Overview: An RNA of 177 nucleotides, treated with DMS and read out base by base.

RNA sequence: GGGAACGACUCGAGUAGAGUCGAAAAUGCAGCCAUGCGAAGAAAAAAGAACGGGAGAAGAAAGAGCAAGAGCGGUCUCAGGAGCCCCGGGGCAACUCAGACCGAGCGGGGAGAGCGGACGACUGGGCUAUCCUCAUUUGUUCGCAAAUGAGGAUAGAAAAGAAACAACAACAACAAC
Reactivity to DMS in 0.01 (KOAc 150mM, MgCl2 10mM, bicine 150mM(pH8.5), 24C), signal-to-noise 1, nucleotides 027 to 126: u030g010c040a080g050c020c060a060u000g000c040g010a120a120g000a010a120a090a050a070a070g010a110a060c070g000g010g010a090g000a050a080g010a050a050a080g010a080g000c070a080a070g000a090g010c070g020g010u000c020u000c200a050g000g020a300g010c000c000c070c140g030g000g000g030c010a040a160c000u000c100a020g000a020c040c020g030a100g030c080g010g010g000g000a030g020a070g010c040g000g010a050c090g020a070c080u030g010g010g010

Values cover nucleotides 27 to 126. Conditions: 150 mM KOAc, 10 mM MgCl2 and 150 mM bicine (pH 8.5), 24 C.